RNA sequence: GGGAACGACUCGAGUAGAGUCGAAAAAGCAUUCAUUACUGGUGAUAUUGAUGAUGCUGUACAUGAUUGUAUCAUUACAGGAAAAUUGGAUCUUAGUACCAACCUUUUUGGUAAUGUUGGUCUAUUAUUCAAGAAGACUCCAUGGUUUGUACAAAAGAUUUGGAUAACUCUUCGGAGUUAUCCAAAUAAAAGAAACAACAACAACAAC
Reactivity to DMS in 0.01 (KOAc 150mM, MgCl2 10mM, bicine 150mM(pH8.5), 24C), signal-to-noise 3, nucleotides 027 to 156: a080g000c040a120u000u000c050a070u000u000a060c030u000g000g000u010g010a050u000a030u020u020g050a040u000g000a020u000g010c040u000g020u000a300c100a050u000g010a090u000u000g040u000a300u000c050a030u000u000a070c020a080g000g000a030a040a060a200u000u000g000g000a010u000c020u010u010a020g000u020a020c010c000a010a040c030c070u000u000u000u010u020g000g000u010a020a060u000g010u000u000g010g020u010c020u000a010u000u040a030u000u000c030a010a050g000a080a150g000a090c020u000c030c010a110u000g000g000u010u000u020g030u000a080c070a050a090a050a180g000
Reactivity to 2A3 in 0.01 (KOAc 150mM, MgCl2 10mM, bicine 150mM(pH8.5), 24C), signal-to-noise 2, nucleotides 027 to 156: a000g080c060a070u130u060c010a010u030u160a010c020u070g030g010u070g030a020u030a010u080u070g000a020u030g000a010u020g000c040u050g070u090a040c010a060u070g020a100u060u180g060u180a070u070c030a020u020u120a030c010a060g030g030a020a030a050a140u040u000g000g000a000u010c000u000u010a010g050u120a020c000c000a010a000c010c040u040u090u090u210u170g210g100u230a030a040u080g010u000u000g000g000u000c000u010a010u040u010a010u000u050c010a020a000g000a030a020g050a080c010u000c030c030a010u030g040g040u090u030u060g030u050a060c030a030a150a010a010g090